Chemical mapping of a 177-nucleotide RNA with DMS. Source: RMDB library VIROID, as collected in RNAgym. Conditions: 150 mM KOAc, 10 mM MgCl2 and 150 mM bicine (pH 8.5), 24 C.
RNA sequence: GGGAACGACUCGAGUAGAGUCGAAAACGCACAAGGCAUGGAAAGAAAAAGAAUAGGGAGCUGAAGACUUACCUGGAGAGAGGAUCCCCGGGGCAACUCUUUCCAGAAUCCAGGGGGCUCCGAGCGCCCUUCAAUAGUGCUUCGGCACUAUUGAAGGAAAAGAAACAACAACAACAAC
Reactivity to DMS in 0.01 (KOAc 150mM, MgCl2 10mM, bicine 150mM(pH8.5), 24C), signal-to-noise 1, nucleotides 027 to 126: c150g010c040a060c100a120a120g000g000c030a010u000g030g000a050a030a080g030a040a150a020a040a150g000a120a100u010a080g020g010g010a010g000c020u000g000a080a100g000a080c150u000u010a080c160c000u000g000g010a060g010a040g020a060g020g000a150u000c020c020c040c130g010g000g010g000c060a050a030c000u000c030u010u000u010c010c000a020g000a030a100u000c060c060a060g010g040g000g010g010c040u000c020c010g010a140g010c150g000c140